The record gives the reactivity of an RNA of 177 nucleotides to 2A3 and DMS. The 2A3 profile rests on 1,890 reads.
RNA sequence: GGGAACGACUCGAGUAGAGUCGAAAAGCCGUCGGGCUGGAUGGUCACGGCGGCGAAAUUCGAGGUCGAGUGGCCCGCCGACCCGCAGCGGGCGGGUUUGGUGCGUUCACAUUUCGGCGCCCGCCGCCGGAUUUACGGACUUCGGUCCGUAAAUCCGAAAAGAAACAACAACAACAAC
Reactivity to 2A3 in 0.01 (KOAc 150mM, MgCl2 10mM, bicine 150mM(pH8.5), 24C), signal-to-noise 2, nucleotides 027 to 126: g000c000c000g000u000c010g040g010g010c020u090g180g230a260u300g070g010u030c060a070c300g000g010c000g000g000c010g000a050a040a000u090u070c040g020a030g010g080u030c010g000a020g030u020g030g010c000c000c000g000c000c010g010a000c020c000c030g000c030a160g140c170g190g070g000c140g000g000g000u060u100u300g010g010u030g010c070g010u140u180c010a030c020a050u110u230u170c030g010g000c010g000c000c010c000g030c020c000g030c040
Reactivity to DMS in 0.01 (KOAc 150mM, MgCl2 10mM, bicine 150mM(pH8.5), 24C), signal-to-noise 1, nucleotides 027 to 126: g000c040c000g060u080c000g010g020g000c000u020g020g040a090u050g010g000u000c000a150c020g020g000c000g030g010c000g000a000a000a080u000u040c160g000a070g000g030u020c040g020a080g020u000g000g020c160c020c010g000c000c000g000a020c060c020c020g140c000a180g050c220g000g030g030c000g000g000g000u000u010u050g020g000u050g000c300g000u000u000c000a060c030a170u020u020u010c020g000g000c000g000c000c000c060g020c050c130g020c180